[RMDB]
RNA sequence: GGGAACGACUCGAGUAGAGUCGAAAACAACAGCCGUUCAGUACCAAGUCUCAGGGGAAACUUUGAGAUGGCCUUGCAAAGGAUAUGGUAAUAAGCUGACGGACAGGGUCCUAACCACGCAGCCAAGUCCUAAGUCAACAUUUCGGUGUUGAUAUGGGUCCUCUAAAAACUUCGGUUUUUAGAGGACAAAAGAAACAACAACAACAAC
Reactivity to DMS in 0.01 (KOAc 150mM, MgCl2 10mM, bicine 150mM(pH8.5), 24C), signal-to-noise 1, nucleotides 027 to 156: c080a040a070c000a140g030c000c020g000u000u000c010a080g000u040a060c070c010a040a300g020u000c000u000c030a040g010g000g000g040a280a050a130c020u000u000u000g000a080g020a040u000g000g020c010c000u000u010g030c160a050a110a200g000g000a090u000a130u000g010g000u000a070a110u010a080a160g070c070u000g020a070c020g010g000a130c110a090g000g000g100u030c030c020u050a150a200c020c020a050c180g050c080a020g030c050c020a030a210g000u000c010c000u020a080a290g000u030c010a000a040c000a010u000u000u040c210g000g000u000g050u010u010g010a050u010a080u000g000g000
Reactivity to 2A3 in 0.01 (KOAc 150mM, MgCl2 10mM, bicine 150mM(pH8.5), 24C), signal-to-noise 2, nucleotides 027 to 156: c020a000a000c000a020g020c000c010g100u210u080c020a000g000u010a000c010c070a030a000g000u000c000u000c000a000g020g000g010g000a000a020a020c010u010u010u010g000a000g000a000u020g010g000c000c010u040u160g020c030a060a030a030g050g000a030u120a300u300g020g000u010a050a000u010a040a010g000c000u000g010a000c000g000g000a000c050a050g080g000g000u040c020c020u040a060a040c010c020a030c040g040c020a030g020c050c090a110a000g060u050c000c000u010a050a000g000u010c000a000a010c000a010u020u050u120c200g110g000u010g000u000u000g000a020u000a010u050g050g000
An RNA of 207 nucleotides, treated with DMS and 2A3 and read out base by base. Reactivities are rounded to 0.1 and cut off at 0 and 3. The reactions ran in a buffer of 150 mM KOAc, 10 mM MgCl2 and 150 mM bicine (pH 8.5), at 24 C. For 2A3, 1,548 sequencing reads were counted. The data come from the RNA Mapping Database (RMDB), library ARCHII. Reactivities are given for positions 27 through 156. For 2A3 the reverse transcriptase was SuperScript II with manganese.